[RMDB]
RNA sequence: GGGAACGACUCGAGUAGAGUCGAAAAAGAUGGUAUGCGUGUUGCCGAUCUCGAAGUGGAGUUCGCUGAGAUGGAUGGCUACAUGGCAGAAUCCAAAGCGGGUGAACUGCUGCUGGCGGUGGGUAUAGUAGCAGUAGUACUUCGGUACUACUGCUACAAAAGAAACAACAACAACAAC
Reactivity to 2A3 in 0.01 (KOAc 150mM, MgCl2 10mM, bicine 150mM(pH8.5), 24C), signal-to-noise 2, nucleotides 027 to 126: a020g100a050u080g010g040u090a040u040g020c040g000u040g000u000u040g000c010c030g010a020u000c010u030c020g080a100a040g030u050g050g190a220g100u210u220c030g000c070u040g010a030g010a090u070g080g020a030u120g030g000c010u030a020c020a040u040g190g000c000a000g070a040a050u000c010c010a000a090a000g070c050g030g000g020u080g030a070a050c010u050g030c020u030g010c020u020g050g000c020g020g070u130g030g000g040u100a100u080a180
Reactivity to DMS in 0.01 (KOAc 150mM, MgCl2 10mM, bicine 150mM(pH8.5), 24C), signal-to-noise 4, nucleotides 027 to 126: a120g000a140u000g000g010u000a100u000g000c040g020u010g000u000u000g020c010c020g000a160u000c040u000c030g010a150a060g040u000g020g020a220g020u020u000c030g010c010u000g000a230g020a070u000g010g010a120u010g000g030c000u000a040c080a050u000g000g020c030a020g010a160a070u000c010c020a040a060a150g020c060g000g010g010u010g000a120a120c070u000g000c040u000g000c100u010g010g000c080g010g010u000g000g000g010u010a060u000a130
Annotation
Structure probing data (2A3 and DMS) for a 177-nucleotide construct. It was measured as part of the RMDB library OK2TST.